[RMDB]
Structure probing data (2A3 and DMS) for a 177-nucleotide construct. The reactions ran in a buffer of 150 mM KOAc, 10 mM MgCl2 and 150 mM bicine (pH 8.5), at 24 C. For 2A3 the reverse transcriptase was SuperScript II with manganese. Values cover nucleotides 27 to 126. The 2A3 profile rests on 1,796 reads. For DMS, 3,361 sequencing reads were counted.
RNA sequence: GGGAACGACUCGAGUAGAGUCGAAAAGAAAACUUGUCGAUCGUUAGACAGGAAACGAGAAGAAAGGUACCAGGCUAAGGUACCGAUAGCCUGAGGCAUUGGUCAUAACGAUGCUUAUGACGAGAAAGGGAUUCUUAUACUUCGGUAUAAGAAUCCCAAAAGAAACAACAACAACAAC
Reactivity to 2A3 in 0.01 (KOAc 150mM, MgCl2 10mM, bicine 150mM(pH8.5), 24C), signal-to-noise 3, nucleotides 027 to 126: g100a010a070a010a080c030u010u020g030u060c010g050a100u030c000g040u000u070a090g080a010c000a010g170g070a010a110a050c280g000a110g060a190a070g140a090a110a010g020g000u000a010c050c000a050g230g000c200u140a240a000g090g000u020a020c010c030g000a000u010a000g020c000c000u030g070a060g120g000c110a160u050u100g100g000u090c000a040u010a110a000c070g120a060u080g010c000u160u050a080u230g000a000c050g000a000g040a110a090a050
Reactivity to DMS in 0.01 (KOAc 150mM, MgCl2 10mM, bicine 150mM(pH8.5), 24C), signal-to-noise 3, nucleotides 027 to 126: g020a050a050a100a090c000u000u000g000u000c000g010a120u000c010g010u000u000a100g000a050c030a100g000g020a040a060a090c060g000a090g010a110a090g020a060a080a230g010g010u000a020c000c050a070g010g050c200u050a070a070g030g000u010a030c040c030g000a060u020a060g000c010c020u000g050a090g020g020c080a060u020u000g020g010u000c120a110u040a060a050c030g030a060u040g000c030u030u030a090u070g000a010c000g070a020g000a030a100a070